[RMDB]
RNA sequence: GGGAACGACUCGAGUAGAGUCGAAAAAGUGCACUCAGUUUAACUGUUGUCAGUUUUUACUCAGUGUUGGAUUUAAUUAUGUAGGACCAAAACAUUCCUCAGUAAAUUAGCUUGCUAAAUAUUGUUACAACGAACAACAGUUCGCUGUUGUUCGUUGAAAAGAAACAACAACAACAAC
Reactivity to DMS in 0.01 (KOAc 150mM, MgCl2 10mM, bicine 150mM(pH8.5), 24C), signal-to-noise 2, nucleotides 027 to 126: a110g040u000g000c010a000c020u000c170a000g000u000u020u000a040a010c030u000g000u020u040g010u030c040a020g000u010u000u010u020u000a030c030u000c220a040g020u010g010u010u000g000g000a130u010u010u010a050a040u010u030a080u010g030u010a030g000g000a080c120c080a050a070a100a090c120a100u000u000c010c000u010c050a100g010u000a010a060a080u000u010a040g000c080u020u040g000c040u000a010a020a070u040a070u010u020g000u030u000a120
Reactivity to 2A3 in 0.01 (KOAc 150mM, MgCl2 10mM, bicine 150mM(pH8.5), 24C), signal-to-noise 4, nucleotides 027 to 126: a000g140u150g010c020a010c010u030c000a000g000u030u070u060a040a000c030u020g170u230u160g190u300c020a040g000u000u000u000u000u170a010c000u010c010a000g000u000g020u080u020g020g030a030u080u140u200a130a090u100u190a080u260g150u160a080g000g000a050c050c080a000a030a060a000c100a100u070u000c000c000u010c010a000g080u110a020a090a100u090u050a050g010c070u060u120g000c000u000a030a010a060u230a130u040u010g030u020u010a030
Record summary
The data come from the RNA Mapping Database (RMDB), libraries RFM100 and RFMREP. This 177-nucleotide RNA was probed chemically with DMS and 2A3. The reactions ran in a buffer of 150 mM KOAc, 10 mM MgCl2 and 150 mM bicine (pH 8.5), at 24 C.